[RMDB]
RNA sequence: GGGAACGACUCGAGUAGAGUCGAAAAGAUAUGGAGCGCAAUCGCGAUAAGCUGCAUUCGGAAACGAAUGGCAGCUUUUGACGCGAGCGCUCCUAAGUCAAAAGGUUCCAACUUCGGUUGGAACCAAGAUACCAUUGGGGUUCGCCCCAAUGGUAUCAAAAGAAACAACAACAACAAC
Reactivity to DMS in 0.01 (KOAc 150mM, MgCl2 10mM, bicine 150mM(pH8.5), 24C), signal-to-noise 3, nucleotides 027 to 126: g000a030u000a270u010g010g010a010g000c000g000c010a140a140u000c000g030c010g020a220u020a040a030g010c020u000g000c010a040u000u010c000g010g010a070a050a110c000g000a020a010u020g020g020c010a000g010c000u000u000u010u000g010a220c040g040c010g010a050g010c000g010c020u000c000c000u000a000a040g000u000c010a080a110a150a140g010g020u000u000c010c000a010a010c000u000u020c290g020g000u000u000g000g000a010a010c000c000a010a010
Reactivity to 2A3 in 0.01 (KOAc 150mM, MgCl2 10mM, bicine 150mM(pH8.5), 24C), signal-to-noise 1, nucleotides 027 to 126: g040a000u010a030u140g000g020a010g010c020g020c080a260a300u080c030g000c020g050a110u110a300a020g000c000u010g000c020a000u010u020c000g000g040a010a110a010c050g010a010a040u050g110g000c000a000g000c000u000u010u020u010g020a000c020g010c010g000a010g030c000g000c000u000c000c000u010a000a020g000u020c020a000a000a280a000g000g000u010u000c010c000a020a000c000u070u070c300g130g000u000u000g000g000a000a000c000c000a000a000
Structure probing data (DMS and 2A3) for a 177-nucleotide construct. It was measured as part of the RMDB library TTRDES. For DMS the reverse transcriptase was MarathonRT. The reactions ran in a buffer of 150 mM KOAc, 10 mM MgCl2 and 150 mM bicine (pH 8.5), at 24 C.